[RMDB]
Conditions: 150 mM KOAc, 10 mM MgCl2 and 150 mM bicine (pH 8.5), 24 C. An RNA of 177 nucleotides, treated with 2A3 and read out base by base. It was measured as part of the RMDB library RFM100.

RNA sequence: GGGAACGACUCGAGUAGAGUCGAAAAGUCCGCGGAGACACCCAUCCGUGAACCCCAGGUCCCGGGCCGCCGGCUCGCCGCGCACCAGGGGCCGGCGGACAGAAGAGCGGCCGAGCGGCUCGAGGCUACAAGUCGGUUUAUUCGUAAACCGACUUGUAAAAGAAACAACAACAACAAC
Reactivity to 2A3 in 0.01 (KOAc 150mM, MgCl2 10mM, bicine 150mM(pH8.5), 24C), signal-to-noise 1, nucleotides 027 to 126: g050u020c000c000g000c020g000g040a150g020a050c070a120c020c050c010a030u020c000c000g020u010g050a040a070c010c010c000c000a020g050g060u000c000c000c000g000g000g000c000c000g000c000c010g000g030c070u090c030g000c000c000g060c010g030c040a110c050c100a110g270g000g030g060c010c010g000g000c000g010g000a030c040a010g160a180a010g000a030g050c060g010g000c000c010g020a070g010c000g000g020c000u000c000g000a050g000g000c000u010